The data come from the RNA Mapping Database (RMDB), library M2RFPK. An RNA of 207 nucleotides, treated with 2A3 and read out base by base. For 2A3, 629 sequencing reads were counted.

RNA sequence: GGGAACGACUCGAGUAGAGUCGAAAAGAAAGAAAGAAAGCGGUUGGGUGGGUCCAUCGACCGUCGUGGCGUAUUCGGACGCUUUACCACGACGCGAGGAAAUAGCGAGACCGACCACUCCCUUUAACAGAGGUAUAGUAGUUCGCUACUAUACCAACACAGUGCUUACCUUCGGGUAAGCACUGUGAAAAGAAACAACAACAACAAC
Reactivity to 2A3 in 0.01 (KOAc 150mM, MgCl2 10mM, bicine 150mM(pH8.5), 24C), signal-to-noise 1, nucleotides 027 to 156: g070a010a020a000g080a060a110a030g080a090a090a010g080c190g100g040u190u070g100g060g000u070g030g060g040u040c040c040a100u080c020g050a070c010c040g000u000c000g010u020g010g010c110g020u090a140u080u040c070g150g050a000c040g030c030u110u070u150a020c010c010a000c030g000a000c000g030c010g010a010g020g020a000a220a000u100a030g130c060g060a060g010a030c020c000g070a000c000c000a130c040u030c030c000c010u020u100u000a070a070c160a070g030a040g150g000u000a000u000a000g000u000a000g000u070u100c280g000c170u000a000c000u000a000u000a000c000c000a000a000

For 2A3 the reverse transcriptase was SuperScript II with manganese. The RNA was probed in 150 mM KOAc, 10 mM MgCl2 and 150 mM bicine (pH 8.5) at 24 C.